[RMDB]
RNA sequence: GGGAACGACUCGAGUAGAGUCGAAAAGAUCUCACGUGAGAACGUGAACGUGAGAGUACUCUCGUACUCGUUCGAUCACACGUUCACGAUCGAACACUCGUGUACGAGUACACACUCGUGAUCACGUACUCUCGUACGUGUUCGUGAACGAGAGUACGGUCCCUCUGCACUUCGGUGCAGAGGGACCAAAAGAAACAACAACAACAAC
Reactivity to 2A3 in 0.01 (KOAc 150mM, MgCl2 10mM, bicine 150mM(pH8.5), 24C), signal-to-noise 2, nucleotides 027 to 156: g140a020u000c000u020c000a000c050g020u000g040a090g030a100a000c000g100u090g000a020a000c020g010u020g010a040g000a000g040u000a020c020u060c000u040c210g000u010a010c010u010c100g110u230u090c060g030a080u180c030a020c010a010c080g100u160u120c030a020c100g000a040u020c010g010a010a000c020a070c020u050c060g010u080g030u070a020c000g000a020g010u100a020c030a000c010a000c170u020c000g020u020g060a020u110c010a000c040g020u000a000c020u050c030u010c100g020u070a000c030g010u040g110u230u160c050g000u050g140a030a020c010g000a000g000a000g000u030a020c100